RNA sequence: GGGAACGACUCGAGUAGAGUCGAAAAUCUUAAUGGUAUCAUUUCUAACGCUAGGAAUGGUUGUAUACCUCUUAGUGUCAUCCCACUGUGUGCUUCAAAUAAACUUCGCGUUGUAAUUCCUGACUUCGACCUAAACACUUCGGUGUUUAGAAAAGAAACAACAACAACAAC
Reactivity to 2A3 in 0.01 (KOAc 150mM, MgCl2 10mM, bicine 150mM(pH8.5), 24C), signal-to-noise 9, nucleotides 027 to 129: u060c030u060u110a130a070u140g030g010u070a000u120c010a040u020u020u020c040u050a150a130c170g050c160u030a020g020g030a060a040u080g080g060u070u080g110u060a050u050a010c000c000u050c060u060u030a020g020u030g030u060c030a050u040c020c020c010a050c050u050g010u010g040u040g100c010u020u050c070a060a110a190u170a100a090a030c040u080u080c050g020c030g030u020u050g030u060a060a090u070u040c010c010u030g050a070c010u040u020c040g050a040c000
Reactivity to DMS in 0.01 (KOAc 150mM, MgCl2 10mM, bicine 150mM(pH8.5), 24C), signal-to-noise 6, nucleotides 027 to 129: u030c060u000u000a050a060u050g000g040u010a000u030c030a080u000u000u000c030u000a080a160c180g000c190u040a000g000g030a030a030u000g010g060u000u000g000u030a090u050a080c040c040u030c130u000u000a050g000u040g000u030c110a080u000c010c000c010a130c090u030g030u020g040u020g040c070u000u040c080a060a100a090u060a040a080a050c020u030u020c080g020c110g040u060u000g030u000a060a080u000u000c030c020u000g000a090c120u000u000c040g020a180c240